[RMDB]
RNA sequence: GGGAACGACUCGAGUAGAGUCGAAAAUAUAACAGCUUUUAUCACAUUUACUAUCCUCAUUCUAUUAACUAUUCUUGAAUUUGCAGUAGCUCUGAUCCAAGCUUAUGUGUUUACACUGCUAGUAAGCUUAUACCUACACGACAAUACAUAAUGACCCCAGAUUAAGGAUGUUCGCAUCCUUAAUCUGAAAAGAAACAACAACAACAAC
Reactivity to 2A3 in 0.01 (KOAc 150mM, MgCl2 10mM, bicine 150mM(pH8.5), 24C), signal-to-noise 8, nucleotides 027 to 156: u180a000u030a070a070c020a010g040c020u060u070u100u120a080u110c040a030c030a100u100u100u150a070c040u080a070u090c030c020u060c040a060u110u060c050u100a100u130u100a160a070c040u060a100u190u080c040u050u080g070a150a110u070u050u120g010c040a010g020u040a010g010c010u000c020u070g030a020u050c040c030a030a010g010c000u050u000a030u060g050u000g010u000u020u040a040c090a020c030u050g020c010u010a050g020u040a050a000g000c010u080u030a040u030a080c010c020u010a020c060a010c060g120a020c040a070a080u110a090c040a030u170a110a030u150g070a090c000c000c000
Reactivity to DMS in 0.01 (KOAc 150mM, MgCl2 10mM, bicine 150mM(pH8.5), 24C), signal-to-noise 2, nucleotides 027 to 156: u010a090u000a060a130c040a070g000c030u010u000u020u000a060u010c020a080c010a090u000u000u000a060c020u000a090u000c080c040u020c040a070u010u010c030u010a090u000u000a070a130c060u000a120u000u000c040u010u010g030a050a090u000u000u010g010c010a070g030u000a040g020c030u000c040u010g010a060u000c060c020a030a100g010c070u010u000a040u000g040u000g010u000u000u000a070c130a090c080u000g010c030u000a090g020u000a040a080g010c060u000u000a110u000a070c020c000u000a070c050a140c040g040a120c090a020a080u000a080c060a070u010a030a080u000g000a190c010c000c060